Structure probing data (DMS and 2A3) for a 207-nucleotide construct. For DMS the reverse transcriptase was MarathonRT. For DMS, 3,895 sequencing reads were counted.
RNA sequence: GGGAACGACUCGAGUAGAGUCGAAAACCGUAGGAGCGUGCAAAGCAAUGAUGUAUGGUCGUACGUCCACAUUCGAAAGAGUGUGGAUUGAAACCAUAUUGAGCUUUGCCGCUCCUAAACGGAAAUCUACAGCUUUUCUUCGGAAAAGCUGUAGAAAUCGACAUAAGAUGUUCGCAUCUUAUGUCGAAAAAGAAACAACAACAACAAC
Reactivity to DMS in 0.01 (KOAc 150mM, MgCl2 10mM, bicine 150mM(pH8.5), 24C), signal-to-noise 2, nucleotides 027 to 156: c000c000g010u020a020g000g000a010g030c000g010u000g050c020a000a010a010g020c000a170a040u000g040a090u010g010u010a000u000g020g000u020c040g000u020a300c300g000u010c000c020a010c000a020u010u000c000g000a250a160a300g010a050g000u000g020u000g000g030a020u000u010g010a240a030a000c010c010a000u020a000u000u000g000a040g000c020u010u000u000g000c000c010g000c000u000c000c000u010a000a010a080c020g000g000a070a120a150u000c010u000a000c000a010g010c000u000u000u000u010c000u000u000c300g050g000a020a000a000a010g000c010u000g000u020a010g000a010a040a110
Reactivity to 2A3 in 0.01 (KOAc 150mM, MgCl2 10mM, bicine 150mM(pH8.5), 24C), signal-to-noise 3, nucleotides 027 to 156: c000c000g000u010a010g020g000a000g000c030g020u300g030c060a000a000a000g030c030a130a300u120g020a030u080g010u010a000u010g000g040u050c060g080u140a080c030g020u020c000c000a000c000a000u010u000c000g070a150a070a060g000a020g010u000g000u000g010g000a000u000u070g010a010a000a000c000c010a000u010a010u010u020g000a000g000c000u000u000u000g000c000c010g000c010u010c000c000u000a000a000a010c010g010g050a020a050a060u010c000u000a000c000a000g000c000u000u000u020u040c020u040u150c180g050g000a000a000a000a000g000c000u000g000u000a000g000a000a000a000
The RNA was probed in 150 mM KOAc, 10 mM MgCl2 and 150 mM bicine (pH 8.5) at 24 C.